[RMDB]
RNA sequence: GGGAACGACUCGAGUAGAGUCGAAAAGUAGGGCAGCCACAUGAUCUGCCUUUAUCCUCCCAUUUUAAAUCUUGUCAAUAGGUAAUCCACUGGGAGGGGAGUCAAUUGAUUGAUGGGGGACAUAGGCGGUCACUCAUAGUUUCGACUAUGAGUGACCAAAAGAAACAACAACAACAAC
Reactivity to 2A3 in 0.01 (KOAc 150mM, MgCl2 10mM, bicine 150mM(pH8.5), 24C), signal-to-noise 2, nucleotides 027 to 126: g180u130a040g040g010g000c010a010g060c070c080a120c070a110u260g020a210u010c010u030g030c000c000u080u020u000a030u010c000c000u060c020c010c000a010u150u080u050u130a030a170a080u010c020u030u140g170u180c090a040a090u030a110g030g040u060a030a110u010c030c000a030c110u030g000g000g050a060g060g030g000g000a010g060u080c000a030a110u050u100g050a020u030u110g000a020u070g010g000g000g020g000a000c020a060u050a020g110g000c090
Reactivity to DMS in 0.01 (KOAc 150mM, MgCl2 10mM, bicine 150mM(pH8.5), 24C), signal-to-noise 1, nucleotides 027 to 126: g010u000a020g000g010g020c020a010g060c300c090a070c070a150u000g000a070u000c000u010g020c000c000u000u020u000a130u030c060c030u020c000c020c010a160u000u000u040u000a110a200a070u010c040u000u000g000u010c110a160a080u000a040g000g010u010a090a140u000c100c040a060c150u000g010g000g000a080g010g000g000g010a110g010u030c050a060a080u000u000g010a130u000u000g000a040u030g000g010g000g040g000a140c100a060u000a040g010g010c210